[RMDB]
RNA sequence: GGGAACGACUCGAGUAGAGUCGAAAAGGGUGUUGAUGUCGGGGGAAACCCUCCCGUGAACCAGCGGGAUAGAGAGAAAGACAAAGACCGGGAAUAAACUAAAGCGCCUUAGUCUGGCGCUUUAGUUAGACUACCUAUACUUCGGUAUAGGUAGUCUAAAAGAAACAACAACAACAAC
Reactivity to DMS in 0.01 (KOAc 150mM, MgCl2 10mM, bicine 150mM(pH8.5), 24C), signal-to-noise 1, nucleotides 027 to 126: g030g020g010u020g030u010u000g010a300u010g020u000c000g040g010g000g000g000a160a130a150c060c020c010u000c000c000c000g010u000g000a130a230c150c050a240g000c000g000g020g000a000u000a020g010a300g030a210g010a020a040a020g000a030c020a040a100a300g020a020c000c040g000g000g000a260a070u000a060a060a020c010u000a000a010a010g000c020g000c000c000u010u000a190g000u020c280u000g010g030c000g000c010u000u000u000a000g010u000u000